RNA sequence: GGGAACGACUCGAGUAGAGUCGAAAAUUGGUGGCGCCUGUCUCAUAUCAGUGAGGGACAAAACAACUCCUUGUUUAUCCCAGCUUGGCUUUUGCUCUGUGCCCAUGCCUGGUUCAUGCCCUGGACACUGGAACAGCAUGUUCGCAUGCUGUUCCAGAAAAGAAACAACAACAACAAC
Reactivity to DMS in 0.01 (KOAc 150mM, MgCl2 10mM, bicine 150mM(pH8.5), 24C), signal-to-noise 2, nucleotides 027 to 126: u010u030g000g080u010g010g000c050g000c030c030u020g020u020c000u040c000a100u000a080u030c180a070g020u050g020a110g000g020g010a040c070a080a010a060a090c180a050a060c160u020c100c010u000u030g010u000u000u020a240u010c010c000c040a150g000c070u000u000g000g000c100u000u020u040u010g000c050u010c040u000g000u030g050c020c060c080a020u020g030c060c000u000g000g000u020u030c030a090u040g000c030c020c090u000g000g000a090c180a140